[RMDB]
RNA sequence: GGGAACGACUCGAGUAGAGUCGAAAAGGCUGCUGCCGGAGCCGAUACCGGAAUACGAGACCUCAUGUGCGGUCGAAUGCACUGAAGUACGAAAGUACGAAGAGGUCAAACCGAGGACCGAGACUCGAUAUGCUCGAUAGAUGGAGCUUUACAUCAAAUCACCUGCAUAGUUCGCUAUGCAGGUGAUAAAAGAAACAACAACAACAAC
Reactivity to DMS in 0.01 (KOAc 150mM, MgCl2 10mM, bicine 150mM(pH8.5), 24C), signal-to-noise 1, nucleotides 027 to 156: g020g070c000u000g070c000u000g020c020c030g100g020a150g080c060c010g000a090u000a130c030c000g050g000a090a040u020a170c040g000a300g020a050c010c000u020c030a200u000g050u000g000c000g010g000u000c230g010a050a130u000g040c040a010c000u000g000a100a170g020u000a030c000g000a250a090a180g000u000a020c020g020a100a180g000a110g010g010u020c010a020a110a050c000c050g000a100g000g000a100c070c020g000a140g020a110c050u020c020g020a120u000a080u000g000c050u010c020g030a080u030a140g030a170u010g020g000a100g010c050u000u000u000a100c030a050u030c080a050a200
Reactivity to 2A3 in 0.01 (KOAc 150mM, MgCl2 10mM, bicine 150mM(pH8.5), 24C), signal-to-noise 2, nucleotides 027 to 156: g020g010c020u040g020c050u070g020c060c010g050g000a010g040c040c090g030a040u070a070c050c000g030g040a050a070u190a140c090g020a020g010a100c000c000u000c010a020u070g000u010g020c010g020g050u100c050g060a060a100u150g000c000a010c010u060g030a070a010g010u000a000c010g030a150a000a010g010u000a000c000g010a080a000g000a000g000g010u000c000a000a000a000c030c010g000a040g010g040a030c030c050g090a030g010a080c000u000c020g040a060u050a070u260g010c020u020c030g020a040u060a070g070a030u100g000g060a020g010c000u050u050u110a070c070a070u070c030a050a110